[RMDB]
RNA sequence: GGGAACGACUCGAGUAGAGUCGAAAAAGCCAGCAUUACGAUGCUGGCAACCCUCAGUUGAGGUAGUUAAGAAUAAGUGAUGACCAUCAGAAGUAUUCACGUAUUCUCCCUGCCUCCACUGUGUCAAAAAAUAGCGAUCCUUCGGGAUCGCUAUUUUAAAAGAAACAACAACAACAAC
Reactivity to DMS in 0.01 (KOAc 150mM, MgCl2 10mM, bicine 150mM(pH8.5), 24C), signal-to-noise 2, nucleotides 027 to 126: a070g000c010c000a000g000c000a000u010u000a160c130g040a030u000g000c000u000g000g010c010a030a030c000c000c010u000c000a000g000u000u000g000a030g010g010u000a000g000u010u000a210a010g010a010a000u000a070a040g000u030g000a020u000g000a240c300c060a010u070c300a300g160a180a120g000u060a130u000u000c000a000c000g000u000a000u000u000c030u020c230c300c000u020g000c000c000u010c000c080a040c000u010g000u000g000u000c200a020a090
Reactivity to 2A3 in 0.01 (KOAc 150mM, MgCl2 10mM, bicine 150mM(pH8.5), 24C), signal-to-noise 2, nucleotides 027 to 126: a040g010c000c030a000g110c000a000u010u010a040c260g090a020u030g000c020u000g000g040c000a000a000c000c000c010u040c000a000g000u000u000g010a000g000g000u030a020g010u050u160a050a010g060a000a000u010a100a000g000u000g000a010u080g030a050c070c040a010u220c050a050g210a200a020g100u020a050u040u070c000a000c020g000u000a000u000u000c000u070c000c010c000u000g000c000c000u020c060c000a000c000u030g060u040g160u030c010a020a040